[RMDB]
RNA sequence: GGGAACGACUCGAGUAGAGUCGAAAACAACAAAACAAAACAUAGGGGAGUCAGGGUUCGGACCUCCUCCCGGAACCUAGGGUAACACUGACUGUGGAGGGGAAAAGAAAGAAAACAAAACAAAACACACCAUGCAUACGUUCGCGUAUGCAUGGUGAAAAGAAACAACAACAACAAC
Reactivity to 2A3 in 0.01 (KOAc 150mM, MgCl2 10mM, bicine 150mM(pH8.5), 24C), signal-to-noise 2, nucleotides 027 to 126: c050a010a020c020a000a220a000a000c060a000a080a000a000c110a190u270a180g040g020g000g000a020g020u140c060a000g000g010g000u000u000c010g020g000a060c030c060u010c000c010u000c000c010c020g030g030a010a000c000c020u070a030g000g000g120u100a060a000c130a000c070u040g010a000c000u010g050u070g020g000a140g010g010g090g030a000a130a000a040g120a040a130a000g090a010a040a060a000c120a020a150a000a000c040a060a080a080a000c210a000
Reactivity to DMS in 0.01 (KOAc 150mM, MgCl2 10mM, bicine 150mM(pH8.5), 24C), signal-to-noise 1, nucleotides 027 to 126: c000a050a010c170a150a180a060a000c050a060a050a040a080c050a060u000a200g000g000g020g050a030g030u000c010a020g000g000g000u000u000c000g000g000a110c060c000u000c020c030u000c000c000c000g000g000a060a140c120c120u050a120g000g000g000u000a000a090c090a300c030u000g000a000c020u010g000u000g000g200a080g000g110g120g000a000a000a050a110g000a060a020a030g000a300a080a010a000c170a120a020a000a000c100a010a090a290a060c300a050
Notes:
The data come from the RNA Mapping Database (RMDB), library OK1LIB. An RNA of 177 nucleotides, treated with 2A3 and DMS and read out base by base.